[RMDB]
RNA sequence: GGGAACGACUCGAGUAGAGUCGAAAAGAAAGAAAGAAAGAAUAAUGCUCAUGCACGUAACGUUGUUGAUGACUUCUUAAUUAAUACAUUAGUGCCGAAAAUUACACUUACCAGCAUGCAUAAGCUGUUUCAUUUUUCUUUUUUUGACAGUGAUUAACAUUACGUAGUGAUUCGUCACUACGUAAUGAAAAGAAACAACAACAACAAC
Reactivity to 2A3 in 0.01 (KOAc 150mM, MgCl2 10mM, bicine 150mM(pH8.5), 24C), signal-to-noise 7, nucleotides 027 to 156: g030a000a010a000g020a000a030a000g040a020a110a010g040a030a050u190a140a070u160g010c010u010c030a010u030g000c020a000c060g040u090a110a010c060g020u070u020g010u030u030g040a060u060g040a040c000u040u010c000u040u050a080a080u080u090a060a040u120a110c030a060u050u130a040g030u020g080c030c010g080a080a060a040a020u120u080a030c030a010c030u040u030a050c010c040a030g060c010a040u040g010c010a040u020a090a020g000c010u020g050u030u040u020c010a030u040u020u010u040u000c000u020u020u010u010u000u010u040g050a040c040a050g090u060g130a100u140u230a070a010
Reactivity to DMS in 0.01 (KOAc 150mM, MgCl2 10mM, bicine 150mM(pH8.5), 24C), signal-to-noise 5, nucleotides 027 to 156: g020a040a030a030g000a030a030a040g010a050a100a110g010a060a050u000a070a070u000g020c010u000c030a030u000g040c010a020c020g000u000a110a140c100g010u000u010g010u010u000g010a140u000g010a110c200u010u000c060u000u000a070a110u000u000a090a140u000a090c060a080u000u000a030g010u000g020c020c040g000a060a050a050a080u000u000a060c050a070c050u010u000a110c080c050a150g000c040a040u010g020c010a030u000a030a050g010c000u000g010u000u000u010c040a220u000u010u000u000u010c010u020u000u000u000u000u010u000g010a110c060a090g020u000g000a160u000u000a060a190
This 207-nucleotide RNA was probed chemically with 2A3 and DMS. The RNA was probed in 150 mM KOAc, 10 mM MgCl2 and 150 mM bicine (pH 8.5) at 24 C. It was measured as part of the RMDB library OK3TST. For DMS the reverse transcriptase was MarathonRT.